Source: RMDB library M2RFPK, as collected in RNAgym. An RNA of 207 nucleotides, treated with 2A3 and DMS and read out base by base.
[RMDB]
RNA sequence: GGGAACGACUCGAGUAGAGUCGAAAAAAAGACGCGGUUGCCGAUCGGUAUGGAUGCCACCGUGACGGCACAAUCACACAAGUGCCAACGAUAACGAGGCGCUCGCUAUUGCUGCGUAACUGACGGCUAGAUACAGCCAGGUUCGCCUGGCUGUAAACUUAGAAGUAACGUUCGCGUUACUUCUAAGAAAAGAAACAACAACAACAAC
Reactivity to 2A3 in 0.01 (KOAc 150mM, MgCl2 10mM, bicine 150mM(pH8.5), 24C), signal-to-noise 5, nucleotides 027 to 156: a000a000a020g110a020c050g010c030g040g010u050u050g000c020c020g050a140u060c030g020g050u130a090u190g120g030a050u080g000c010c020a040c020c000g000u020g060a110c090g000g020c000a000c000a030a070u180c040a040c010a000c010a160a100g010u000g000c000c020a030a030c090g070a060u090a180a050c050g030a070g030g010c030g010c030u050c040g020c020u060a080u120u300g030c060u050g000c030g030u020a070a050c040u060g040a040c000g020g000c040u060a040g000a140u040a040c000a000g000c000c010a000g010g000u040u020c040g020c040c000u000g000g010c000u000g000u010a010a020a000
Reactivity to DMS in 0.01 (KOAc 150mM, MgCl2 10mM, bicine 150mM(pH8.5), 24C), signal-to-noise 2, nucleotides 027 to 156: a080a040a020g010a070c040g020c050g060g050u000u010g030c010c020g010a140u000c050g030g000u000a100u000g040g030a180u010g050c020c060a060c040c000g020u000g020a300c120g020g000c030a040c050a030a110u010c090a190c070a150c070a170a070g030u020g040c030c000a050a040c020g000a150u020a020a060c030g010a120g010g040c100g000c060u000c030g040c010u000a040u000u000g020c010u000g000c040g000u000a080a070c040u020g010a090c020g020g000c050u010a150g010a300u000a050c000a010g000c010c000a000g000g000u000u000c300g060c030c000u000g000g070c010u000g010u000a000a040a090
The RNA was probed in 150 mM KOAc, 10 mM MgCl2 and 150 mM bicine (pH 8.5) at 24 C.
The 2A3 profile rests on 4,226 reads.